[RMDB]
RNA sequence: GGGAACGACUCGAGUAGAGUCGAAAAUGGGAUGGACUGCGUGAGGCUGGUUUCACAGAGCAACGACUAGUCCCCGCUCUGUGCAGUGGAAGGAUCACGGGCUAGUGCUCUUUGAGUCCUAACAAAAACCUGAUAGGUUGCCUAAUUAAACCAUCACGUGUAUACUCCGGUUCGCCGGAGUAUACACAAAAGAAACAACAACAACAAC
Reactivity to 2A3 in 0.01 (KOAc 150mM, MgCl2 10mM, bicine 150mM(pH8.5), 24C), signal-to-noise 1, nucleotides 027 to 156: u120g040g000g000a080u040g020g000a020c120u070g020c020g020u050g010a050g000g040c020u030g000g040u050u120u150c010a040c000a000g040a000g010c030a000a130c040g160a010c040u110a010g080u080c000c000c000c010g060c020u040c060u110g180u180g000c080a040g040u000g030g060a110a060g050g010a010u100c030a000c120g010g000g000c070u020a000g070u050g090c000u030c010u060u020u020g040a030g000u000c000c010u070a060a050c090a020a100a010a000a010c000c020u010g050a060u130a190g000g000u000u020g000c000c030u090a070a060u190u120a040a040a040c000c040a060u030c030a030c180
Source information
Structure probing data (2A3) for a 207-nucleotide construct. Conditions: 150 mM KOAc, 10 mM MgCl2 and 150 mM bicine (pH 8.5), 24 C.